[RMDB]
RNA sequence: GGGAACGACUCGAGUAGAGUCGAAAAAUCGUGCUAGUACCGAAAGGCUAAUACCCGAUAAUAAUCAACGGGGAUCGGGCUCUCAGUUCGGCAUAGGACGAAUAUAAUAGAGAGGGCGUGGGCGCUACUAGUAGGGAAACUUCGGUUUCCCUACUAGAAAAGAAACAACAACAACAAC
Reactivity to DMS in 0.01 (KOAc 150mM, MgCl2 10mM, bicine 150mM(pH8.5), 24C), signal-to-noise 5, nucleotides 027 to 126: a040u030c020g010u010g020c030u000a040g020u030a180c000c000g000a030a090a080g010g000c040u010a120a080u020a130c020c010c000g020a090u010a120a070u040a070a110u050c190a170a080c060g010g000g010g020a040u000c080g010g000g010c050u000c130u010c150a120g000u010u000c010g010g010c120a250u010a060g000g010a010c020g000a020a060u020a060u030a070a110u030a090g010a050g000a050g000g000g010c060g020u000g000g000g010c060g010c090u010a080
Reactivity to 2A3 in 0.01 (KOAc 150mM, MgCl2 10mM, bicine 150mM(pH8.5), 24C), signal-to-noise 7, nucleotides 027 to 126: a000u040c010g000u030g080c000u020a040g050u070a100c000c000g020a060a030a010g060g000c030u050a050a050u080a200c000c000c000g070a040u130a220a070u150a070a070u230c070a060a090c030g000g000g040g010a040u100c110g050g030g000c020u010c000u010c060a130g020u060u010c000g010g000c040a050u050a070g030g040a000c010g000a020a000u160a010u020a080a120u150a020g090a000g010a020g030g040g000c080g020u120g020g010g010c030g010c040u040a080
Conditions: 150 mM KOAc, 10 mM MgCl2 and 150 mM bicine (pH 8.5), 24 C. Structure probing data (DMS and 2A3) for a 177-nucleotide construct. For DMS, 9,251 sequencing reads were counted. For 2A3, 4,796 sequencing reads were counted. The data come from the RNA Mapping Database (RMDB), library OK1LIB. Reactivities are given for positions 27 through 126. High 2A3 reactivity points to a flexible backbone, as in loops and unpaired stretches. For DMS the reverse transcriptase was MarathonRT.